[RMDB]
RNA sequence: GGGAACGACUCGAGUAGAGUCGAAAAACGAGUGAGUUACGACUCACUCGACUUUUAAUGCUACCCAAAGGUCGUGACAAGUCGAUAAAACCCAGAGUCAAAAAGUCCGACGUUACGACGUCGGACAACGAGCGAGUUCUGUUCGCAGAACUCGCAACAAUGCAAGACCCUUCGGGGUCUUGCAUUGAAAAGAAACAACAACAACAAC
Reactivity to 2A3 in 0.01 (KOAc 150mM, MgCl2 10mM, bicine 150mM(pH8.5), 24C), signal-to-noise 1, nucleotides 027 to 156: a020c040g000a000g010u010g000a010g020u050u090a100c200g040a010c050u000c000a000c000u010c000g000a000c000u090u090u020u080a150a100u090g060c030u030a070c010c030c060a050a050a030g070g000u020c010g010u040g050a020c030a030a000g010u010c010g090a140u040a110a140a000a000c040c000c040a010g010a010g140u120c110a090a000a050a040a040g000u000c010c000g000a000c000g040u030u010a070c300g010a000c000g090u000c000g000g000a000c000a000a000c000g080a010g020c010g000a000g000u010u000c000u030g050u030u130c170g060c070a000g000a000a000c000u020c000g000c000a000a000